Structure probing data (DMS) for a 177-nucleotide construct. It was measured as part of the RMDB library OK2TRN. Reactivities are given for positions 27 through 126. DMS adducts were read by reverse transcription with MarathonRT. The DMS profile rests on 2,503 reads. The reactions ran in a buffer of 150 mM KOAc, 10 mM MgCl2 and 150 mM bicine (pH 8.5), at 24 C.

[RMDB]
RNA sequence: GGGAACGACUCGAGUAGAGUCGAAAAAAUCAUUAGAUGCUAUCAGCGUGGGGACAAUUAUGGCCCCGUUUUCAAAGCACAAUUGAAGGAUGAACCGAGAGAUGCAGAUAAGGUUGCAAUGGGUAAAAAGAUACUCCAGUUUCGACUGGAGUAUCUUAAAAGAAACAACAACAACAAC
Reactivity to DMS in 0.01 (KOAc 150mM, MgCl2 10mM, bicine 150mM(pH8.5), 24C), signal-to-noise 3, nucleotides 027 to 126: a070a050u000c020a070u000u020a100g000a140u000g010c020u010a110u010c090a060g000c130g020u000g030g010g030g000a050c030a050a190u010u010a120u010g010g000c000c010c000c010g000u000u000u000u000c110a060a090a060g020c060a030c070a060a080u000u000g010a070a050g000g010a060u000g020a060a110c050c030g010a110g000a090g000a080u000g000c020a030g010a080u000a020a050g000g010u000u000g000c040a040a060u010g000g000g000u000a030a050a070